Background:
An RNA of 177 nucleotides, treated with DMS and 2A3 and read out base by base. It was measured as part of the RMDB libraries RFM100 and RFMREP. For DMS the reverse transcriptase was MarathonRT. Reactivities are given for positions 27 through 126.
RNA sequence: GGGAACGACUCGAGUAGAGUCGAAAAGGAUAAAAGGUACUCCGGGGAUAACAGGCUGAUCCCUCCCAAGAGCUCACAUCGACGGAGUGGUUUGGCACCUCGAUGUCGGCUCGUCACAUCCUGGGGCGACUCUUGGCAAAUUCGUUUGCCAAGAGUCAAAAGAAACAACAACAACAAC
Reactivity to DMS in 0.01 (KOAc 150mM, MgCl2 10mM, bicine 150mM(pH8.5), 24C), signal-to-noise 3, nucleotides 027 to 126: g000g000a060u010a040a050a130a070g000g020u020a040c180u000c040c010g040g000g010g000a030u000a090a110c030a040g010g010c030u000g000a090u000c030c020c000u010c000c020c010a150a070g010a000g000c010u020c300a030c000a000u000c000g000a080c190g010g010a150g000u010g000g020u030u060u020g010g000c020a040c000c000u000c010g000a030u020g000u000c280g000g000c000u000c000g000u030c200a090c130a010u030c040c030u000g000g040g000g000c280
Reactivity to 2A3 in 0.01 (KOAc 150mM, MgCl2 10mM, bicine 150mM(pH8.5), 24C), signal-to-noise 6, nucleotides 027 to 126: g010g000a030u110a090a140a010a020g080g030u070a090c040u010c010c020g000g000g020g010a030u050a230a060c030a070g050g040c030u030g030a030u040c000c000c000u010c000c010c000a010a070g000a000g010c010u000c060a010c000a030u010c010g010a040c250g110g000a160g070u080g040g100u230u230u220g130g040c010a020c010c000u000c010g010a000u000g020u040c060g000g000c000u000c010g040u040c010a030c010a100u060c010c000u020g010g000g030g000c060